[RMDB]
RNA sequence: GGGAACGACUCGAGUAGAGUCGAAAAGGACGGCCCGCGCGAGCGGGAGGACGGCGGGGCGAUAGCAGGUCUGUGAUGCCCUCAGACGCCCUGGGCCGCACGCGCGCUACACUGGCGGGGCCAGCCGCGUGAAGAUUAGGUUCGCCUAAUCUUCACGAAAAGAAACAACAACAACAAC
Reactivity to 2A3 in 0.01 (KOAc 150mM, MgCl2 10mM, bicine 150mM(pH8.5), 24C), signal-to-noise 9, nucleotides 027 to 126: g050g040a040c040g010g010c000c010c000g010c010g010c000g010a010g010c010g020g030g020a030g030g010a010c000g010g020c010g000g000g010g010c010g110a140u090a050g060c100a010g050g150u090c070u060g070u070g070a100u170g020c010c000c000u020c040a090g020a050c010g000c000c010c000u030g040g110g030c010c010g010c000a020c010g030c000g000c000g010c020u110a050c070a050c170u100g080g000c050g010g010g020g040c010c000a000g010c000c010g030
Reactivity to DMS in 0.01 (KOAc 150mM, MgCl2 10mM, bicine 150mM(pH8.5), 24C), signal-to-noise 5, nucleotides 027 to 126: g020g010a090c090g000g020c020c020c000g040c020g020c030g010a090g020c010g020g000g010a030g000g000a080c010g010g020c020g000g020g000g020c010g000a110u000a170g020c090a050g000g010u020c070u000g030u020g010a160u010g000c080c010c000u000c070a110g000a150c000g010c010c000c000u000g010g010g010c000c010g000c060a050c030g000c010g000c020g000c060u010a090c150a100c150u020g010g000c010g010g000g000g010c010c020a140g010c010c020g020